This 207-nucleotide RNA was probed chemically with DMS and 2A3. The reactions ran in a buffer of 150 mM KOAc, 10 mM MgCl2 and 150 mM bicine (pH 8.5), at 24 C. DMS adducts were read by reverse transcription with MarathonRT. For 2A3, 749 sequencing reads were counted.

RNA sequence: GGGAACGACUCGAGUAGAGUCGAAAAUAAGUCUCGCUCUAUCCCCUAGGCUGGAGUGCAGUGACAUGAUCUCAGCUCACUACAACCUCCACCUCACAGGUUCAAGUGAUUCUCCUGCCUCAGCCUUCUGAGUAGCUGGGAUUACAGGCGCGUGCCAUGCUAUGAGUAGUUUCGACUACUCAUAGCAAAAAGAAACAACAACAACAAC
Reactivity to DMS in 0.01 (KOAc 150mM, MgCl2 10mM, bicine 150mM(pH8.5), 24C), signal-to-noise 2, nucleotides 027 to 156: u010a090a110g010u000c000u000c040g020c050u010c050u010a120u010c000c020c040c060u000a060g040g020c000u000g040g000a080g000u000g020c030a010g040u000g040a090c160a120u010g010a100u000c040u000c060a170g000c120u000c020a040c020u000a080c050a020a060c020c010u010c050c030a060c110c050u000c120a200c080a020g010g010u000u000c050a080a050g010u000g010a100u000u000c040u010c010c010u000g000c010c000u000c010a060g010c010c010u010u020c040u010g010a120g030u010a040g000c060u000g010g000g050a060u010u000a070c050a050g010g020c020g040c110g020u000g000c050c000a210
Reactivity to 2A3 in 0.01 (KOAc 150mM, MgCl2 10mM, bicine 150mM(pH8.5), 24C), signal-to-noise 2, nucleotides 027 to 156: u210a050a000g040u090c050u000c060g000c020u030c070u100a120u080c010c030c000c030u050a040g000g040c060u070g010g100a040g010u100g030c030a020g040u110g130a030c030a140u240g060a120u120c080u010c040a030g050c020u030c020a050c010u130a050c070a040a000c000c000u010c050c050a080c010c050u050c040a000c000a040g030g000u020u010c020a020a020g000u000g020a030u160u000c060u000c050c010u010g000c000c000u020c000a000g000c000c000u010u080c080u040g030a050g000u060a000g000c020u100g000g000g040a020u010u030a050c060a060g030g000c020g020c030g160u100g050c000c000a030